RNA sequence: GGGAACGACUCGAGUAGAGUCGAAAAUGACUUCCACGUCUCGCUCUGCCUUCGCUCUGCGCUGUCUGCGUUCUGCAGCUUGGGUUUGGCUAGGGCAGAGGAUUCUGGGAAAUGAUCAGACCCGUUUAACCCGCACUUCCUUCGGGAAGUGCGGGUUAAAAGAAACAACAACAACAAC
Reactivity to 2A3 in 0.01 (KOAc 150mM, MgCl2 10mM, bicine 150mM(pH8.5), 24C), signal-to-noise 1, nucleotides 027 to 126: u000g000a010c020u100u000c000c010a060c060g000u000c000u000c000g300c030u030c000u000g000c010c000u010u000c050g000c000u050c020u000g000c260g240c050u000g060u160c000u000g050c000g050u300u160c040u210g000c000a010g000c060u160u060g120g000g000u090u060u220g000g000c010u000a000g020g000g000c000a000g040a000g000g000a080u080u020c090u050g000g000g050a000a120a140u140g050a180u040c000a010g010a060c000c000c000g010u000u000u000
Description
An RNA of 177 nucleotides, treated with 2A3 and read out base by base. Conditions: 150 mM KOAc, 10 mM MgCl2 and 150 mM bicine (pH 8.5), 24 C.